[RMDB]
RNA sequence: GGGAACGACUCGAGUAGAGUCGAAAAGACGCCUGAUGGCGAACGUGCGCAAGAUAAGAAUGGUGGUAUAUACUGCCUAGAAUAACUAAUGGACGGCAGAGCGCACGAACCACCACAGUCCACCAGAAAUACUACUGGUAUUCGUACCAGUAGUAUUAAAAGAAACAACAACAACAAC
Reactivity to DMS in 0.01 (KOAc 150mM, MgCl2 10mM, bicine 150mM(pH8.5), 24C), signal-to-noise 9, nucleotides 027 to 126: g010a140c040g020c010c000u020g010a150u040g020g020c030g020a080a150c010g020u000g000c000g040c000a170a120g010a160u030a090a100g010a100a120u000g000g000u000g010g000u000a080u020a090u020a150c010u000g010c000c010u000a140g010a120a080u030a100a130c230u040a100a090u010g010g010a130c150g010g000c010a010g010a130g000c000g010c000a000c000g000a090a110c080c040a110c090c070a100c200a140g010u010c000c000a020c010c020a140g010a130
Reactivity to 2A3 in 0.01 (KOAc 150mM, MgCl2 10mM, bicine 150mM(pH8.5), 24C), signal-to-noise 9, nucleotides 027 to 126: g080a020c020g020c010c030u280g210a230u300g030g000c010g000a040a020c010g010u010g000c010g000c030a090a050g050a260u160a130a070g080a120a040u060g010g000u010g010g030u010a090u010a010u030a140c000u010g000c000c000u010a020g090a090a130u180a110a020c110u140a100a110u150g100g040a030c040g020g000c000a000g010a010g010c000g000c000a000c010g000a000a000c020c010a040c010c010a040c010a040g100u030c010c000a000c000c010a030g070a010